[RMDB]
RNA sequence: GGGAACGACUCGAGUAGAGUCGAAAACUCCCCUCAAAAUCGUUUCAGUCCAAAUUUGAUUCGGCGGCCCUGUCAUGAGGCCGAAACGAAGGCACGUACCCCUUCGAAUGGCGUCGGGGAGUCAGCGAAAGCACUGACCCUUUCGAGGGUCAGUGAACAAUUAUCUCUGGUUCGCCAGAGAUAAUUGAAAAGAAACAACAACAACAAC
Reactivity to 2A3 in 0.01 (KOAc 150mM, MgCl2 10mM, bicine 150mM(pH8.5), 24C), signal-to-noise 3, nucleotides 027 to 156: c010u030c010c010c010c000u090c060a210a210a170a220u080c030g020u040u070u110c080a110g090u040c070c050a070a100a170u160u150u150g060a100u090u090c020g040g010c000g000g010c050c020c000u070g100u120c020a070u060g030a020g040g010c000c010g020a020a000a000c010g010a000a010g020g020c100a000c140g160u200a130c060c000c000c000u000u000c000g030a040a050u050g020g010c010g040u070c030g020g020g000g010a020g020u040c050a030g070c020g080a170a040a020g050c010a000c000u000g000a000c000c000c000u000u010u060c170g070a020g000g000g020u000c000a000g010u000g000a000a000
Reactivity to DMS in 0.01 (KOAc 150mM, MgCl2 10mM, bicine 150mM(pH8.5), 24C), signal-to-noise 2, nucleotides 027 to 156: c030u000c000c000c000c000u000c050a030a100a090a070u000c000g020u000u020u000c030a130g040u000c050c050a090a140a140u000u000u020g020a180u000u000c030g030g030c030g040g030c020c020c000u000g030u010c190a070u000g020a080g040g040c010c010g000a000a010a110c000g030a030a040g010g040c080a090c110g000u010a130c070c090c000c040u030u020c050g020a100a150u010g010g020c040g030u000c070g000g010g010g010a060g010u000c040a110g030c040g020a120a110a200g020c010a030c000u000g000a020c000c010c000u000u000u000c210g010a030g040g010g020u000c000a010g020u000g000a010a090